The record gives the reactivity of an RNA of 177 nucleotides to DMS and 2A3. Source: RMDB library VIROID, as collected in RNAgym.
[RMDB]
RNA sequence: GGGAACGACUCGAGUAGAGUCGAAAACGAUCCGAGGGGCCCGGCCACCAGGGUUUGGAGAGCACUCCGGGCCGAAGGGUUGAGUAGCAUCCAGAGGGAGGAAUCCACGCAGAGUAGAACGGAGAAACAUUCUUAUAGUGUUCGCACUAUAAGAAUGAAAAGAAACAACAACAACAAC
Reactivity to DMS in 0.01 (KOAc 150mM, MgCl2 10mM, bicine 150mM(pH8.5), 24C), signal-to-noise 5, nucleotides 027 to 126: c080g000a040u000c010c010g020a180g020g000g010g000c020c020c030g020g000c220c040a080c070c040a060g020g020g010u010u010u010g010g020a090g000a120g020c140a100c130u000c020c030g000g000g000c000c010g000a090a100g000g010g000u000u000g000a080g020u010a070g000c050a060u000c040c030a070g000a090g010g010g010a070g010g010a070a100u000c030c030a040c090g010c060a080g000a090g010u000a070g010a060a060c080g010g010a130g000a110a080a140
Reactivity to 2A3 in 0.01 (KOAc 150mM, MgCl2 10mM, bicine 150mM(pH8.5), 24C), signal-to-noise 2, nucleotides 027 to 126: c020g010a020u000c030c020g000a070g050g190g020g000c000c000c000g000g040c010c030a090c010c010a040g030g100g000u160u160u070g030g010a040g000a000g030c050a030c090u020c010c000g000g010g000c020c000g010a020a010g050g000g000u010u020g010a020g010u070a020g010c000a050u020c020c000a020g040a070g050g020g020a030g010g040a060a020u010c010c010a040c040g020c030a020g030a030g100u130a040g010a100a030c040g000g060a040g060a040a080a000
DMS adducts were read by reverse transcription with MarathonRT. The reactions ran in a buffer of 150 mM KOAc, 10 mM MgCl2 and 150 mM bicine (pH 8.5), at 24 C.